Chemical mapping of a 177-nucleotide RNA with 2A3.
RNA sequence: GGGAACGACUCGAGUAGAGUCGAAAACAGUUAGUCCUACUUUCAUUUUAUGAUGGUAGGGUGUUAAAACUGGUGCACAAAGAAAGUACUGCUCUUGAAGCAGUGGCGGCCAGACAACCGUUGAGAUCCACGUAAUCCUGUUCGCAGGAUUACGUGGAAAAGAAACAACAACAACAAC
Reactivity to 2A3 in 0.01 (KOAc 150mM, MgCl2 10mM, bicine 150mM(pH8.5), 24C), signal-to-noise 1, nucleotides 027 to 126: c010a020g010u010u030a030g070u000c000c000u000a010c000u050u110u000c000a030u000u050u050u300a070u040g010a000u040g000g000u000a000g000g190g040u030g000u000u060a080a030a020a020c000u000g010g030u060g090c130a000c000a040a280a000g190a030a020a000g000u030a010c000u000g000c000u000c000u210u270g110a300a000g000c000a000g000u000g000g000c000g000g000c000c040a000g000a060c000a010a010c020c000g040u060u000g020a010g000a090u050